[RMDB]
Annotation:
Conditions: 150 mM KOAc, 10 mM MgCl2 and 150 mM bicine (pH 8.5), 24 C. An RNA of 207 nucleotides, treated with 2A3 and DMS and read out base by base. The 2A3 profile rests on 1,741 reads. DMS adducts were read by reverse transcription with MarathonRT. Source: RMDB library OK3TST, as collected in RNAgym.

RNA sequence: GGGAACGACUCGAGUAGAGUCGAAAAGAGCUUGCAGCAGGAGGACAAGGCGACCGUUCUGAAGGCCUUUGGAGUGACGCUGUGUUUCGGCGACGGGUAGGACGAGCAGGCGGGAAGCGCGGGCGAUGCGAGCAGGCGUGAGUUGCCCGAUGGAACGAGUGUUUAACUCUUUCGAGAGUUAAACACUAAAAGAAACAACAACAACAAC
Reactivity to 2A3 in 0.01 (KOAc 150mM, MgCl2 10mM, bicine 150mM(pH8.5), 24C), signal-to-noise 3, nucleotides 027 to 156: g080a020g030c030u040u060g030c000a010g000c020a030g040g100a050g000g050a070c030a050a080g050g020c020g050a070c020c020g040u180u150c030u040g070a070a010g020g010c020c010u150u070u100g080g030a120g020u100g040a060c010g000c020u010g030u020g040u110u060u170c020g010g010c020g020a040c060g060g040g020u080a050g070g000a000c010g010a040g120c040a000g010g040c000g030g000g030a060a010g030c040g010c060g030g000g020c020g000a010u070g020c000g000a020g040c030a050g030g020c060g020u000g040a110g030u090u100g020c020c010c000g030a110u120g040g020a080a020c060g010
Reactivity to DMS in 0.01 (KOAc 150mM, MgCl2 10mM, bicine 150mM(pH8.5), 24C), signal-to-noise 1, nucleotides 027 to 156: g000a080g010c020u000u000g000c010a140g020c030a090g000g000a090g040g010a070c040a050a090g030g010c040g000a110c010c040g010u000u000c040u000g020a130a180g000g020c000c040u000u000u000g020g010a130g000u020g010a150c020g050c010u010g010u000g020u000u000u000c040g030g030c030g040a050c010g030g030g070u000a030g000g010a000c050g020a150g010c070a140g020g000c080g020g020g030a100a090g000c060g000c050g030g000g000c050g020a110u000g020c090g020a100g030c020a100g020g010c050g000u010g000a140g030u010u000g010c000c000c030g010a120u000g000g020a090a090c070g010